[RMDB]
RNA sequence: GGGAACGACUCGAGUAGAGUCGAAAACAGUAGCGGAGAUGCCACCACUGCAUAUGCCAAUAGUGUCUUUAACAUUUUGCAGGCGACAACUGCUAAUGUCAGUGCACUUAUGGGUGCUAAUGGCAACCAUGACCCAAUGGUUCGCCAUUGGGUCAUGAAAAGAAACAACAACAACAAC
Reactivity to DMS in 0.01 (KOAc 150mM, MgCl2 10mM, bicine 150mM(pH8.5), 24C), signal-to-noise 2, nucleotides 027 to 126: c060a080g020u000a050g020c020g000g010a080g000a150u000g000c060c010a030c040c020a100c060u010g000c050a070u000a080u010g000c010c010a030a300u000a010g000u000g010u000c060u010u010u000a080a020c010a030u000u010u030u000g010c010a000g020g000c120g010a080c210a110a140c010u000g000c010u020a020a010u000g000u000c070a010g010u010g010c000a000c050u000u000a140u010g000g020g030u000g000c010u000a090a060u000g000g010c020a030a100c180
Reactivity to 2A3 in 0.01 (KOAc 150mM, MgCl2 10mM, bicine 150mM(pH8.5), 24C), signal-to-noise 2, nucleotides 027 to 126: c020a050g080u090a020g020c060g000g070a070g010a040u030g000c000c010a040c010c000a030c020u070g000c030a020u060a060u180g050c020c010a040a010u020a030g030u030g030u040c010u050u150u100a030a000c010a010u020u040u080u160g000c000a000g020g070c040g220a020c040a130a060c010u000g000c030u030a000a020u050g030u030c040a010g040u030g150c000a000c030u020u100a060u080g090g000g010u020g030c000u030a060a040u010g020g000c000a020a040c000
Annotation
Chemical mapping of a 177-nucleotide RNA with DMS and 2A3. Conditions: 150 mM KOAc, 10 mM MgCl2 and 150 mM bicine (pH 8.5), 24 C. Values are in units of 0.01, from 0 to 300, in steps of 10. For DMS, 1,391 sequencing reads were counted.